[RMDB]
RNA sequence: GGGAACGACUCGAGUAGAGUCGAAAACCAGGCUUCCUUGACCACGCCGGCGACGCCGGUGAUGACGUCCUCGAUCUGCGACGGGAAAACGAUCACGCCCUUGAACUUGAUCAUGUCGUCGGAGCGACGUCCCUCCUGCAUUCGUGCAGGAGGGACGAAAAGAAACAACAACAACAAC
Reactivity to DMS in 0.01 (KOAc 150mM, MgCl2 10mM, bicine 150mM(pH8.5), 24C), signal-to-noise 2, nucleotides 027 to 126: c010c000a160g010g000c050u000u020c050c050u010u000g000a110c060c050a070c020g000c020c000g000g010c020g050a180c200g030c050c040g000g000u000g000a020u000g010a120c070g030u000c000c050u010c070g000a050u000c100u000g000c050g020a160c060g020g020g010a070a060a070a050c140g000a030u000c000a090c040g050c080c030c070u030u000g000a060a070c110u010u020g010a020u000c080a100u020g000u000c000g000u000c020g000g000a070g050c090g000a100
Reactivity to 2A3 in 0.01 (KOAc 150mM, MgCl2 10mM, bicine 150mM(pH8.5), 24C), signal-to-noise 2, nucleotides 027 to 126: c010c000a000g010g090c050u100u030c030c010u100u050g070a050c000c040a050c020g000c010c000g000g050c080g160a110c220g040c010c000g020g040u020g030a040u070g020a000c040g010u000c000c030u000c010g140a250u010c030u170g070c000g060a020c050g040g080g000a030a050a010a090c060g050a060u020c010a010c060g070c030c010c000u030u110g070a090a070c040u030u130g000a010u040c000a050u120g080u050c030g020u000c000g010g020a020g020c040g020a000
The data come from the RNA Mapping Database (RMDB), library OK2TST. Chemical mapping of a 177-nucleotide RNA with DMS and 2A3. The RNA was probed in 150 mM KOAc, 10 mM MgCl2 and 150 mM bicine (pH 8.5) at 24 C. Reactivities are given for positions 27 through 126. For DMS, 1,088 sequencing reads were counted.